[RMDB]
RNA sequence: GGGAACGACUCGAGUAGAGUCGAAAACGACUUACCUUCGGGUAAGUCGACAUAGGUGAGUUCAUCGGAUAGCAGCCUAGGUGAGUUCAUCGGAUAGCUGCCACAUGUAACGGUUCGCCGUUACAAACAAUCACGCUAACUUCGGUUAGCGUGAUUGAAAAGAAACAACAACAACAAC
Reactivity to 2A3 in 0.01 (KOAc 150mM, MgCl2 10mM, bicine 150mM(pH8.5), 24C), signal-to-noise 2, nucleotides 027 to 126: c010g000a010c000u000u000a000c000c000u010u100c250g070g020g000u010a000a000g010u000c000g000a010c030a050u200a040g000g030u010g020a030g000u040u020c020a030u030c060g010g020a050u060a170g080c110a020g030c010c030u150a110g000g040u020g010a030g000u030u020c030a030u030c030g000g030a050u110a070g050c080u110g060c030c020a080c020a130u120g000u020a020a000c010g010g070u040u060c250g030c060c000g000u010u000a010c000a020a000a010
Reactivity to DMS in 0.01 (KOAc 150mM, MgCl2 10mM, bicine 150mM(pH8.5), 24C), signal-to-noise 3, nucleotides 027 to 126: c030g000a020c000u000u000a000c000c000u000u010c210g040g000g000u000a000a000g000u000c000g010a040c140a070u010a090g000g000u000g000a060g000u010u000c030a020u000c010g010g010a110u000a080g010c100a040g010c020c030u010a150g020g010u000g000a030g000u010u000c010a020u000c010g000g010a100u010a070g000c070u000g000c010c060a130c190a140u010g020u000a000a010c010g010g020u010u010c200g050c000c010g010u010u000a000c010a010a060a120
Structure probing data (2A3 and DMS) for a 177-nucleotide construct. Conditions: 150 mM KOAc, 10 mM MgCl2 and 150 mM bicine (pH 8.5), 24 C. The 2A3 profile rests on 2,308 reads.